The data come from the RNA Mapping Database (RMDB), library OK2TRN. An RNA of 177 nucleotides, treated with 2A3 and DMS and read out base by base. For 2A3, 24,614 sequencing reads were counted. The DMS profile rests on 31,750 reads.
RNA sequence: GGGAACGACUCGAGUAGAGUCGAAAAAAAGAGUGCGUAAUAGCUCACUGGUCGAGUGACUCCGCGCCGAAAAUGUACCGGGGCUAAACGUAUCACCGAAGCUGUGGGUGGACACCAUCAGGUGUCCUACUCCACAGUGAUUCGUCACUGUGGAGUAAAAAGAAACAACAACAACAAC
Reactivity to 2A3 in 0.01 (KOAc 150mM, MgCl2 10mM, bicine 150mM(pH8.5), 24C), signal-to-noise 9, nucleotides 027 to 126: a000a000a020g160a010g020u100g010c040g050u090a100a050u030a220g000c020u010c040a100c080u140g060g060u080c040g050a090g080u060g050a060c030u000c040c050g020c020g040c010c010g100a120a090a020a070u200g030u090a050c020c020g000g000g040g000c020u050a090a080a030c040g030u060a050u110c020a010c020c020g020a040a010g080c050u050g020u050g110g020g030u040g010g000a000c000a000c010c010a080u290c120a070g000g010u000g000u000c000c000
Reactivity to DMS in 0.01 (KOAc 150mM, MgCl2 10mM, bicine 150mM(pH8.5), 24C), signal-to-noise 9, nucleotides 027 to 126: a060a060a060g010a070g020u000g010c050g010u000a100a080u010a120g010c020u000c010a060c060u010g020g010u000c050g010a110g010u000g000a080c100u010c180c090g010c060g010c030c020g000a050a040a070a090u010g010u010a080c090c020g010g000g000g010c070u000a030a090a060c100g010u000a070u000c040a050c040c020g010a070a070g010c060u000g010u000g000g000g010u000g010g000a010c000a010c000c000a140u010c240a110g010g020u000g000u000c000c010